[RMDB]
RNA sequence: GGGAACGACUCGAGUAGAGUCGAAAAUGUGAGGCGCGUGCAGGGUGAGUGUGAGUGGACGCGUGAGUGUGUGAGUGUGCGCGCUUGGAGCGUGUUAGGCGAGUGCGUGCGCCCACCCCUGCGCCCCGCAUCCUAAUUUGUUCGCAAAUUAGGAUGCAAAAGAAACAACAACAACAAC
Reactivity to DMS in 0.01 (KOAc 150mM, MgCl2 10mM, bicine 150mM(pH8.5), 24C), signal-to-noise 2, nucleotides 027 to 126: u010g010u010g010a090g000g010c050g030c080g030u000g020c080a050g010g010g030u010g000a080g020u000g020u010g000a090g020u000g010g000a040c050g010c020g010u010g000a080g010u000g020u010g000u000g000a110g020u010g000u000g000c010g010c000g020c020u000u000g020g010a150g010c050g020u000g010u010u010a090g020g020c030g010a090g020u010g010c010g020u000g010c000g000c000c020c000a030c000c010c010c010u000g000c030g010c010c010c020c060
Reactivity to 2A3 in 0.01 (KOAc 150mM, MgCl2 10mM, bicine 150mM(pH8.5), 24C), signal-to-noise 4, nucleotides 027 to 126: u170g030u030g050a060g040g040c060g000c050g060u080g000c030a020g000g020g030u090g040a160g010u090g010u050g020a070g040u080g020g100a060c030g020c010g010u070g040a060g000u160g000u030g010u020g050a120g040u130g030u060g030c000g000c010g000c030u010u070g100g060a150g030c060g010u060g100u130u170a090g020g060c030g010a010g010u050g000c000g010u020g030c000g000c000c010c000a000c000c000c010c000u000g000c010g010c010c000c020c000
Chemical mapping of a 177-nucleotide RNA with DMS and 2A3. It was measured as part of the RMDB library RFMREP. Conditions: 150 mM KOAc, 10 mM MgCl2 and 150 mM bicine (pH 8.5), 24 C. Values are in units of 0.01, from 0 to 300, in steps of 10. Values cover nucleotides 27 to 126.